[RMDB]
RNA sequence: GGGAACGACUCGAGUAGAGUCGAAAAGAUAUGGAGCGUACCAGCAACAGCCCACUGACAUCGGAAACGAUGUUUGGGACAUGCUGUGUACGCUCCUAAGUCAAACAUGCCUGUUCGCAGGCAUGAAGUAUCAGGGUUGGUUCGCCAACCCUGAUACAAAAGAAACAACAACAACAAC
Reactivity to DMS in 0.01 (KOAc 150mM, MgCl2 10mM, bicine 150mM(pH8.5), 24C), signal-to-noise 2, nucleotides 027 to 126: g000a030u000a170u030g000g000a020g000c000g020u000a000c000c010a010g020c000a120a090c240a190g000c030c000c010a080c300u030g010a000c000a000u000c010g050g030a060a060a140c000g020a000u010g000u000u000u000g010g020g010a020c100a280u000g030c000u010g000u010g010u000a000c000g000c000u000c000c000u000a010a040g010u000c000a160a120a300c000a000u000g000c000c000u010g010u000u010c160g050c030a010g000g000c000a010u000g000a030a120
Reactivity to 2A3 in 0.01 (KOAc 150mM, MgCl2 10mM, bicine 150mM(pH8.5), 24C), signal-to-noise 2, nucleotides 027 to 126: g020a000u040a010u080g010g000a010g020c020g000u010a010c020c000a010g010c070a100a060c110a130g030c000c030c010a040c140u090g040a000c000a010u000c010g000g030a040a010a020c010g000a000u010g010u010u020u060g000g000g020a020c110a190u300g020c000u000g010u040g000u020a000c000g000c000u000c000c010u020a000a000g000u010c010a000a010a030c000a000u000g000c000c010u050g090u070u090c300g000c110a000g000g000c000a000u000g010a030a060
The record gives the reactivity of an RNA of 177 nucleotides to DMS and 2A3.
For 2A3 the reverse transcriptase was SuperScript II with manganese.
The data come from the RNA Mapping Database (RMDB), library TTRDES.
DMS adducts were read by reverse transcription with MarathonRT.
The RNA was probed in 150 mM KOAc, 10 mM MgCl2 and 150 mM bicine (pH 8.5) at 24 C.